[RMDB]
RNA sequence: GGGAACGACUCGAGUAGAGUCGAAAAGAUAUGGAGUGUCGUCGAUAAGAAUAUAUCGGAAACGAUAUGAUUCUUUUGACGACGCCUCCUAAGUCAAAACAAAAGGUCUGUUCGCAGACCUUUUGAAGCUACUAAUGUCGUUCGCGACAUUAGUAGCAAAAGAAACAACAACAACAAC
Reactivity to 2A3 in 0.01 (KOAc 150mM, MgCl2 10mM, bicine 150mM(pH8.5), 24C), signal-to-noise 2, nucleotides 027 to 126: g000a020u030a040u100g000g000a020g020u030g020u040c030g000u000c030g090a100u100a300a000g010a010a020u020a010u000a000u000c010g010g010a030a020a010c030g000a000u010a000u030g210a030u060u000c010u060u230u030u030g010a000c000g000a020c000g000c000c010u020c010c000u010a040a010g010u000c010a030a050a180a240c000a000a000a040a040g010g000u000c020u030g070u120u180c300g000c130a000g000a010c010c010u000u000u010u010g000a000a000
Reactivity to DMS in 0.01 (KOAc 150mM, MgCl2 10mM, bicine 150mM(pH8.5), 24C), signal-to-noise 2, nucleotides 027 to 126: g020a030u010a230u000g000g020a050g010u010g000u000c000g030u000c010g000a060u000a000a010g000a020a000u000a020u000a010u000c000g000g000a090a040a150c010g010a010u010a000u010g010a020u000u000c010u000u000u000u000g010a020c000g000a010c010g000c120c030u000c000c000u010a050a150g010u000c000a120a060a130a290c020a020a010a010a010g000g010u010c000u000g030u010u000c210g030c000a020g000a020c000c000u010u000u000u000g010a090a160